Structure probing data (DMS and 2A3) for a 177-nucleotide construct. For 2A3 the reverse transcriptase was SuperScript II with manganese. Source: RMDB library OK1LIB, as collected in RNAgym. Reactivities are given for positions 27 through 126. For DMS the reverse transcriptase was MarathonRT. For 2A3, 907 sequencing reads were counted. The reactions ran in a buffer of 150 mM KOAc, 10 mM MgCl2 and 150 mM bicine (pH 8.5), at 24 C. Reactivities are rounded to 0.1 and cut off at 0 and 3.
[RMDB]
RNA sequence: GGGAACGACUCGAGUAGAGUCGAAAAGCUGAAAAAGGUUCGAAGUUAUUGCAAAUUGCAAUUAUCGUAACAAUAAUUGCUUUUGUUUUAAAUUUAUUAGCAUAUUUAGGUUUAAGAUAAGUAAAACAUGAAUGGAAAUCUUCGGAUUUCCAUUCAUAAAAGAAACAACAACAACAAC
Reactivity to DMS in 0.01 (KOAc 150mM, MgCl2 10mM, bicine 150mM(pH8.5), 24C), signal-to-noise 1, nucleotides 027 to 126: g010c070u040g000a050a020a040a120a180g040g000u020u010c110g010a060a090g020u000u000a040u000u000g000c120a060a050a050u000u020g000c000a000a000u000u000a000u000c060g030u060a090a140c220a060a030u010a070a020u000u000g000c000u020u000u000u000g000u000u010u000u000a000a000a060u000u000u030a010u000u000a100g000c020a080u110a020u010u010u000a040g030g000u000u000u010a020a080g000a030u050a030a090g000u020a030a060a140a050c220
Reactivity to 2A3 in 0.01 (KOAc 150mM, MgCl2 10mM, bicine 150mM(pH8.5), 24C), signal-to-noise 2, nucleotides 027 to 126: g030c000u050g070a030a050a000a030a170g100g050u030u120c120g080a060a000g010u050u040a040u050u040g000c010a010a060a140u150u120g000c000a000a000u000u010a010u040c100g120u120a040a040c020a010a060u100a050a000u010u000g000c010u000u000u020u030g010u000u050u000u010a070a110a030u060u200u100a180u030u090a030g010c000a000u040a100u300u030u120a180g050g080u010u110u100a030a000g030a070u020a120a180g100u080a080a210a000a040c060